Source: RMDB library OK3TST, as collected in RNAgym. An RNA of 207 nucleotides, treated with 2A3 and DMS and read out base by base. The DMS profile rests on 5,083 reads. The reactions ran in a buffer of 150 mM KOAc, 10 mM MgCl2 and 150 mM bicine (pH 8.5), at 24 C. DMS adducts were read by reverse transcription with MarathonRT. The 2A3 profile rests on 3,981 reads.
[RMDB]
RNA sequence: GGGAACGACUCGAGUAGAGUCGAAAAUAAUAUCUCGCACUUCCGAGUUCGUAAGACUAGCAACGUUAAUAUUGUUUUUCUUAGCAUAAUCAGCAAGGAUCAAAUCUCUAAGUUUCGGUUCAACAUCAAGCCAUUGUUGAUCAUCCAGGUUGGGCCACAGUUUUAAUUAGUUCGCUAAUUAAAACUGAAAAGAAACAACAACAACAAC
Reactivity to 2A3 in 0.01 (KOAc 150mM, MgCl2 10mM, bicine 150mM(pH8.5), 24C), signal-to-noise 6, nucleotides 027 to 156: u100a010a050u070a070u090c030u010c020g010c030a050c030u080u020c030c010g030a030g040u130u150c040g010u070a110a030g020a090c050u050a020g020c050a040a070c060g050u130u140a120a060u090a130u150u050g040u040u050u000u040u000c020u020u030a040g010c020a060u080a170a110u200c020a020g040c020a030a060g040g010a030u070c040a010a120a120u060c080u040c030u150a170a080g010u010u020u080c040g030g000u010u010c000a010a010c000a060u100c050a050a020g050c040c040a090u060u080g040u020u020g030a050u080c050a040u030c050c030a040g080g000u030u020g010g020g010c000c060a020
Reactivity to DMS in 0.01 (KOAc 150mM, MgCl2 10mM, bicine 150mM(pH8.5), 24C), signal-to-noise 3, nucleotides 027 to 156: u010a080a110u010a280u010c010u000c040g010c020a150c050u000u010c040c000g010a110g020u010u000c050g050u000a050a110g010a070c030u000a090g000c010a050a080c040g030u000u000a090a160u000a040u000u010g020u010u000u000u000u000c000u000u000a140g020c050a090u010a050a100u010c060a060g010c030a080a120g010g020a090u000c070a060a050a120u000c060u000c030u000a090a150g010u000u000u000c020g000g030u000u000c050a020a040c050a060u000c040a060a080g020c020c060a140u010u000g000u000u000g010a080u010c070a100u010c040c020a060g020g010u000u000g030g010g030c030c060a150